[RMDB]
RNA sequence: GGGAACGACUCGAGUAGAGUCGAAAAUUUGCCGUUAAUGAUUGCAUAAACCCGUUUAUUCACUUGUUGAAAACUCAGAUAAUCUACAGUAGAUAAAUAUGAGGCAAUAUUGGUUACAAUCUCGGGACAAGGAAUCAGAAUUCGUUCUGAUUCCUUGAAAAGAAACAACAACAACAAC
Reactivity to 2A3 in 0.01 (KOAc 150mM, MgCl2 10mM, bicine 150mM(pH8.5), 24C), signal-to-noise 3, nucleotides 027 to 126: u030u020u090g070c010c010g030u020u050a160a000u180g050a020u010u070g020c080a050u130a090a110a120c000c000c030g030u070u040u040a100u050u020c020a020c080u070u110g030u040u010g070a070a070a070a040c030u020c040a030g000a140u080a110a030u010c030u040a030c030a140g170u160a010g020a040u050a050a100a010u130a070u090g020a040g020g000c000a010a030u070a070u050u070g050g000u060u060a050c010a030a050u020c040u010c080g020g040g020a040
Reactivity to DMS in 0.01 (KOAc 150mM, MgCl2 10mM, bicine 150mM(pH8.5), 24C), signal-to-noise 6, nucleotides 027 to 126: u010u010u010g010c020c010g020u000u010a110a100u010g000a050u010u000g000c070a090u010a080a130a130c030c020c050g010u000u000u000a060u010u000c040a020c040u000u000g030u000u000g010a030a030a090a110c150u000c140a060g000a110u010a080a120u000c010u000a050c080a050g000u000a050g000a030u010a010a040a030u010a050u010g000a070g000g000c070a040a050u010a090u000u000g000g010u000u010a090c080a040a040u000c020u010c040g000g010g000a250